[RMDB]
RNA sequence: GGGAACGACUCGAGUAGAGUCGAAAAAUAAUUUAAGAUUUUGGUUAUUACCUACAUCUAUAUUAUUAAUUUUAGAUGCUUGUUUUGUAGAUAUAGGUUGUGGGACUAGGUGAACAGUCUACCCACCCAUAUCAUGGGUCUUCGGACCCAUGAUAUGAAAAGAAACAACAACAACAAC
Reactivity to DMS in 0.01 (KOAc 150mM, MgCl2 10mM, bicine 150mM(pH8.5), 24C), signal-to-noise 1, nucleotides 027 to 126: a000u000a010a040u000u070u020a070a030g010a100u020u020u020u000g000g020u000u030a050u030u020a080c010c010u000a120c050a000u030c000u000a020u050a030u030u010a140u000u010a020a130u050u020u020u010a110g020a130u060g000c160u030u020g000u020u000u050u000g050u010a040g000a140u000a060u000a020g020g000u030u000g040u000g010g030g000a070c110u020a000g000g000u000g000a110a110c120a100g000u000c000u000a090c020c010c030a060c050c080
Reactivity to 2A3 in 0.01 (KOAc 150mM, MgCl2 10mM, bicine 150mM(pH8.5), 24C), signal-to-noise 2, nucleotides 027 to 126: a000u000a010a000u000u150u170a190a040g060a180u090u010u040u140g020g010u050u090a110u010u300a060c000c000u000a000c030a010u000c000u000a030u000a000u120u010a000u010u160a230a240u200u150u090u070a100g040a120u120g010c120u040u070g010u100u140u010u020g000u070a040g040a040u030a000u050a040g050g010u080u010g010u010g000g000g060a180c200u000a010g070g000u070g040a090a040c030a080g010u060c000u010a030c000c000c010a000c020c030
The record gives the reactivity of an RNA of 177 nucleotides to DMS and 2A3. The reactions ran in a buffer of 150 mM KOAc, 10 mM MgCl2 and 150 mM bicine (pH 8.5), at 24 C. Reactivities are given for positions 27 through 126.